[RMDB]
RNA sequence: GGGAACGACUCGAGUAGAGUCGAAAAGGGAGAUUUCGCUUCAAUUCAUGUCCUUAGAGGGGAGCACUUACAUUGAAGGUUGUUCAUUUGACUAUUAAUAGAGGUCUGAGGCCUUCUUUGUACCUAAAUCGAUUAAUGGGUUCGCCCAUUAAUCGAUAAAAGAAACAACAACAACAAC
Reactivity to 2A3 in 0.01 (KOAc 150mM, MgCl2 10mM, bicine 150mM(pH8.5), 24C), signal-to-noise 2, nucleotides 027 to 126: g040g040g010a130g010a110u170u090u150c050g010c010u020u000c030a090a180u120u020c040a080u160g080u020c000c010u040u110a040g020a060g020g030g040g010a010g070c010a010c040u030u040a000c010a020u010u020g010a000a000g000g020u030u030g090u190u080c020a070u160u100u170g010a000c020u040a040u300u100a110a180u130a250g270a050g090g080u000c000u000g030a020g000g000c000c010u000u000c000u020u010u000g010u000a010c010c000u170a180a180
Reactivity to DMS in 0.01 (KOAc 150mM, MgCl2 10mM, bicine 150mM(pH8.5), 24C), signal-to-noise 3, nucleotides 027 to 126: g010g010g020a110g010a110u000u010u010c120g010c030u000u000c020a070a050u010u000c080a090u010g020u000c020c020u000u000a140g010a080g030g000g010g000a050g020c080a080c100u010u010a030c030a030u000u010g010a030a020g000g000u000u000g020u020u010c000a100u000u010u000g010a010c010u010a270u010u000a090a150u010a150g010a120g010g000u000c000u020g010a060g010g010c020c010u000u000c000u010u000u000g010u000a020c150c030u000a040a060